Conditions: 150 mM KOAc, 10 mM MgCl2 and 150 mM bicine (pH 8.5), 24 C.
Structure probing data (DMS and 2A3) for a 177-nucleotide construct.
2A3 adducts were read by reverse transcription with SuperScript II with manganese.
Values cover nucleotides 27 to 126.
[RMDB]
RNA sequence: GGGAACGACUCGAGUAGAGUCGAAAAAGCUGCUAGCAUACUACGGUAUGCUAGCAGCAGUGCUCAACGCCUUCCGGCAUCACGGCGAGCGGCACACGUGAUAUGCAGUUACGACUGCAUAUCACGACAGGUGCCCUGAUUUCGAUCAGGGCACCUGAAAAGAAACAACAACAACAAC
Reactivity to DMS in 0.01 (KOAc 150mM, MgCl2 10mM, bicine 150mM(pH8.5), 24C), signal-to-noise 2, nucleotides 027 to 126: a100g000c000u000g020c000u010a010g020c010a010u000a000c000u000a040c270g060g030u000a020u000g020c020u000a000g020c000a000g000c020a000g000u000g000c010u000c020a300a160c010g010c000c000u010u000c180c010g000g040c130a060u060c140a120c140g000g000c060g000a050g000c200g000g000c000a010c010a250c030g000u000g000a000u000a000u000g000c000a030g030u010u010a110c140g010a050c000u000g000c000a000u000a000u000c000a000c030g000a110
Reactivity to 2A3 in 0.01 (KOAc 150mM, MgCl2 10mM, bicine 150mM(pH8.5), 24C), signal-to-noise 4, nucleotides 027 to 126: a000g010c000u000g000c000u010a000g000c010a000u000a010c010u010a020c200g150g010u000a000u000g000c020u000a000g000c000a000g000c000a000g000u000g010c000u010c020a040a040c020g000c000c010u070u060c040c040g120g050c080a170u190c110a050c120g000g000c000g000a000g000c020g020g000c010a010c000a000c020g000u000g000a000u000a000u000g000c000a000g010u000u080a100c290g030a010c110u000g000c000a000u000a000u000c000a000c000g000a020